An RNA of 177 nucleotides, treated with 2A3 and DMS and read out base by base.
2A3 adducts were read by reverse transcription with SuperScript II with manganese.
The data come from the RNA Mapping Database (RMDB), libraries RFM100 and RFMREP.
For DMS the reverse transcriptase was MarathonRT.
The RNA was probed in 150 mM KOAc, 10 mM MgCl2 and 150 mM bicine (pH 8.5) at 24 C.
RNA sequence: GGGAACGACUCGAGUAGAGUCGAAAAAAACCGUGCGCUUACAAUCCGUCAGAGCCUGCGCCACUUUGGUGGGUGGGUGAUGGCGUGCCUUUUGAAGAAUGAGCCUGCGAGUUAGCGGCAUGUCGCGGUGGACGAAAAGAUUCGUCUUUUCGUCCACAAAAGAAACAACAACAACAAC
Reactivity to 2A3 in 0.01 (KOAc 150mM, MgCl2 10mM, bicine 150mM(pH8.5), 24C), signal-to-noise 4, nucleotides 027 to 126: a000a010a000c020c010g000u010g000c020g010c000u020u060a040c070a070a100u030c030c000g020u000c010a000g000a020g090c000c000u000g000c070g290c000c010a010c000u120u200u300g150g020u010g000g030g010u010g010g000g000u040g000a000u010g000g000c020g030u050g020c030c000u110u130u060u100g110a080a060g050a020a040u100g020a000g020c030c040u100g000c030g010a110g070u060u090a010g010c010g050g030c050a020u120g070u080c030g000c050g090
Reactivity to DMS in 0.01 (KOAc 150mM, MgCl2 10mM, bicine 150mM(pH8.5), 24C), signal-to-noise 3, nucleotides 027 to 126: a010a050a080c010c000g010u020g030c210g000c020u010u010a060c040a060a050u010c040c000g000u000c030a050g020a300g010c000c000u010g010c020g010c000c000a010c000u010u080u020g050g000u020g010g030g040u000g000g010g030u000g010a200u000g010g000c000g000u010g010c250c060u000u020u000u030g000a130a040g030a070a100u030g010a110g010c010c070u030g060c000g000a160g000u000u010a070g010c000g010g030c070a000u000g010u010c030g000c030g010